Structure probing data (2A3 and DMS) for a 177-nucleotide construct. Conditions: 150 mM KOAc, 10 mM MgCl2 and 150 mM bicine (pH 8.5), 24 C.
RNA sequence: GGGAACGACUCGAGUAGAGUCGAAAAUAGCAGCAUAGUCGGGUGAGAAUCCCGACCGCCGGAAGGGCAAGGGUUCCACGGCAAUGUUCGUCAGCCGUGGGUGAGUCGGUCCUAAGGUGGCCCGUAAGUGUUUGUUGUUUUUCGAAACAACAAACACAAAAGAAACAACAACAACAAC
Reactivity to 2A3 in 0.01 (KOAc 150mM, MgCl2 10mM, bicine 150mM(pH8.5), 24C), signal-to-noise 4, nucleotides 027 to 126: u130a010g060c140a000g000c000a030u040a060g010u000c000g000g000g000u000g000a010g000a000a020u010c000c000c000g000a000c000c010g000c000c000g050g040a090a120g070g000g020c010a020a110g080g000g000u080u070c000c000a000c010g000g000c070a080a080u090g020u120u150c120g120u090c130a210g240c120c000g000u010g000g000g000u040g010a030g140u020c000g000g000u000c010c000u020a030a000g010g000u010g000g010c000c000c000g030u070a160a050
Reactivity to DMS in 0.01 (KOAc 150mM, MgCl2 10mM, bicine 150mM(pH8.5), 24C), signal-to-noise 3, nucleotides 027 to 126: u030a030g060c200a030g020c090a080u010a080g020u000c000g000g000g040u010g000a230g000a260a100u010c000c010c000g000a000c000c040g010c020c010g000g040a110a080g000g000g000c020a040a040g010g000g020u020u000c000c000a020c010g000g000c020a080a070u080g020u000u050c100g000u020c100a170g020c000c010g010u000g000g000g000u010g000a090g000u000c030g010g000u000c000c020u000a230a170g010g000u020g020g010c010c000c040g000u030a070a080

Source: RMDB libraries RFM100 and RFMREP, as collected in RNAgym. Reactivities are given for positions 27 through 126. For 2A3, 3,612 sequencing reads were counted.